[RMDB]
RNA sequence: GGGAACGACUCGAGUAGAGUCGAAAACGCAUGCGAGAGCAUGCGGCUAAGCUUCGGCUUAGUAAGAGUAACUUAGGAUUUUAGGCUCCCCGGCGUGUCUCGAACAAUGCCGGGCCAAACCCAUAGGGCUGGCGGUCCCUGUGCGGUGAGAAUUCAAGUGGAUAUCACCUUUCGAGGUGAUAUCCACAAAAGAAACAACAACAACAAC
Reactivity to 2A3 in 0.01 (KOAc 150mM, MgCl2 10mM, bicine 150mM(pH8.5), 24C), signal-to-noise 1, nucleotides 027 to 156: c020g000c000a000u000g030c000g020a070g000a000g160c000a020u010g000c000g000g000c010u000a000a010g000c000u020u090c260g100g000c020u040u040a030g010u020a010a030g000a000g010u060a110a020c040u040u060a080g090g040a040u110u010u000u150a030g070g020c000u110c000c000c000c000g000g000c000g020u020g000u030c060u070c240g050a170a000c000a160a180u170g010c020c070g000g000g010c020c000a010a020a000c000c000c000a000u000a000g010g010g000c010u030g070g130c070g000g080u120c010c000c000u000g010u060g020c050g020g100u070g020a050g000a030a060u070u070c040a190a010

The data come from the RNA Mapping Database (RMDB), library OK3TST. This 207-nucleotide RNA was probed chemically with 2A3. 2A3 adducts were read by reverse transcription with SuperScript II with manganese. Conditions: 150 mM KOAc, 10 mM MgCl2 and 150 mM bicine (pH 8.5), 24 C.